[RMDB]
RNA sequence: GGGAACGACUCGAGUAGAGUCGAAAAAUGAGCAAGGAGUCAUGAUGUUAGAUAUAGUCGAACUGUCGCGCUUACAGUUUGCCUUGACCGCGAUGUACCACUUCCUUUUUGUGCCACUGACGCUCGGACCACUAUUGCGGUUCGCCGCAAUAGUGGUAAAAGAAACAACAACAACAAC
Reactivity to DMS in 0.01 (KOAc 150mM, MgCl2 10mM, bicine 150mM(pH8.5), 24C), signal-to-noise 3, nucleotides 027 to 126: a060u000g020a050g020c070a060a120g010g000a190g010u010c030a050u000g010a060u000g020u000u000a040g020a110u000a080u000a030g010u000c020g030a040a010c040u010g010u000c080g020c140g020c190u000u020a050c080a020g020u000u000u010g010c090c020u000u000g010a060c090c060g020c050g000a050u000g010u000a090c050c060a040c070u000u000c020c010u000u000u000u000u030g040u010g010c020c000a040c030u010g010a090c170g010c060u000c050g030g000
Reactivity to 2A3 in 0.01 (KOAc 150mM, MgCl2 10mM, bicine 150mM(pH8.5), 24C), signal-to-noise 2, nucleotides 027 to 126: a000u110g000a000g030c040a060a010g050g010a020g100u090c020a040u120g100a030u110g070u120u090a100g030a110u090a020u100a130g030u050c030g020a000a020c000u020g000u090c050g000c040g000c300u080u090a000c010a030g000u050u040u030g020c000c000u000u060g010a010c010c010g020c000g030a040u100g030u060a030c020c020a040c050u080u080c020c000u040u110u020u080u090g100u060g030c010c050a060c020u050g020a020c040g000c020u000c050g000g020
The data come from the RNA Mapping Database (RMDB), library OK2TST. This 177-nucleotide RNA was probed chemically with DMS and 2A3. The DMS profile rests on 2,313 reads. For 2A3 the reverse transcriptase was SuperScript II with manganese. The RNA was probed in 150 mM KOAc, 10 mM MgCl2 and 150 mM bicine (pH 8.5) at 24 C.